[RMDB]
RNA sequence: GGGAACGACUCGAGUAGAGUCGAAAAUUACAUAAGUCUAACACCUUGUUUCGGACUAACAAGGACGGAUGGAGGAUGGCCGUACCUCCAUAGUUAGACGUCCGAGAACCAGCCGAAAUGAAAAAGACAUACUCGACUCAUUCGUGAGUCGAGUAUGAAAAGAAACAACAACAACAAC
Reactivity to 2A3 in 0.01 (KOAc 150mM, MgCl2 10mM, bicine 150mM(pH8.5), 24C), signal-to-noise 4, nucleotides 027 to 126: u150u070a060c060a060u180a150a050g020u030c050u040a060a000c040a100c040c010u010u040g030u020u020u060c100g080g040a160c030u050a040a020c020a020a020g000g040a030c030g200g040a020u000g020g000a010g020g000a030u070g050g000c040c010g000u030a070c000c000u010c000c000a000u000a020g010u000u050a080g010a070c010g010u040c000c000g020a020g030a080a050c040c020a010g020c020c020g030a030a030a040u080g060a070a030a060a010a000g070a010
Reactivity to DMS in 0.01 (KOAc 150mM, MgCl2 10mM, bicine 150mM(pH8.5), 24C), signal-to-noise 3, nucleotides 027 to 126: u050u030a080c160a130u020a050a080g000u000c020u010a070a070c150a180c080c050u000u010g010u010u000u000c070g010g010a090c040u010a060a090c070a070a200g000g000a020c030g000g010a040u010g010g000a030g000g000a150u020g020g020c000c040g000u010a300c020c020u010c000c000a000u000a010g020u020u020a170g000a110c010g060u000c020c000g010a190g000a100a130c150c150a130g020c000c000g010a030a030a010u000g010a070a040a050a050a080g010a170